Notes
Conditions: 150 mM KOAc, 10 mM MgCl2 and 150 mM bicine (pH 8.5), 24 C. An RNA of 207 nucleotides, treated with DMS and read out base by base. For DMS the reverse transcriptase was MarathonRT. Values cover nucleotides 27 to 156.
RNA sequence: GGGAACGACUCGAGUAGAGUCGAAAACGAUUCCAUUGAACCGAUACGUCGGGAUUGGACUUAGUCUACAGCCGGAGCCUCCGCGCUGUCAAUAAUUUGCAUAAAUAAAAUGAUUGACGUACAUAUCCAAUGAGAAUGCAAAUAGUUUGCUCAUUAAGCCCUAUUUAGGUUUCGACCUAAAUAGGGCAAAAGAAACAACAACAACAAC
Reactivity to DMS in 0.01 (KOAc 150mM, MgCl2 10mM, bicine 150mM(pH8.5), 24C), signal-to-noise 1, nucleotides 027 to 156: c070g010a240u020u000c000c040a090u050u000g010a060a050c000c030g070a300u000a040c070g000u000c000g040g000g000a070u010u000g010g000a110c080u000u000a120g020u010c010u000a110c100a080g030c000c020g020g030a210g010c140c080u000c020c030g030c100g040c040u000g050u000c060a050a090u000a030a070u000u030u010g010c070a120u000a130a110a140u010a060a080a050a060u000g000a190u010u000g010a040c000g000u010a050c100a130u000a060u000c050c050a000a010u020g000a180g000a050a140u000g020c010a130a130a100u000a090g000u000u000u000g010c000u010c060a090u000u010a030a300